This 177-nucleotide RNA was probed chemically with DMS and 2A3. The RNA was probed in 150 mM KOAc, 10 mM MgCl2 and 150 mM bicine (pH 8.5) at 24 C.
RNA sequence: GGGAACGACUCGAGUAGAGUCGAAAAGACAACCACUCCGCGAAAGGCUGCAAGAAGUCUCUUGGAAUAGAGCACGAAACAGGGUGAUAGUCCCGUACUGCAGGCGAGUAUCGGACGCGUCAGCUCCCGGACCAUAUCAGUUCGCUGAUAUGGUCCGAAAAGAAACAACAACAACAAC
Reactivity to DMS in 0.01 (KOAc 150mM, MgCl2 10mM, bicine 150mM(pH8.5), 24C), signal-to-noise 5, nucleotides 027 to 126: g000a050c080a140a160c100c070a230c300u000c000c000g010c030g000a090a080a160g000g000c000u000g000c010a030a020g000a020a030g000u050c010u000c000u000u010g010g050a300a040u010a000g000a000g030c000a000c010g060a300a060a020c000a190g010g000g000u000g020a140u030a040g010u000c010c000c000g000u000a300c030u000g000c000a000g000g000c000g000a090g010u010a060u000c080g000g000a020c120g010c130g000u000c020a100g000c150u000c010c020
Reactivity to 2A3 in 0.01 (KOAc 150mM, MgCl2 10mM, bicine 150mM(pH8.5), 24C), signal-to-noise 2, nucleotides 027 to 126: g000a020c020a050a050c050c040a070c030u000c000c000g010c020g040a010a020a020g140g060c000u000g000c000a010a000g000a020a000g050u050c000u000c000u000u000g000g000a010a000u000a000g000a000g000c000a000c000g020a020a020a010c040a030g020g000g000u010g000a000u000a000g000u000c000c000c000g000u000a000c000u010g000c000a010g020g050c000g000a000g000u000a000u010c000g000g000a010c030g020c030g030u000c010a020g030c030u020c000c000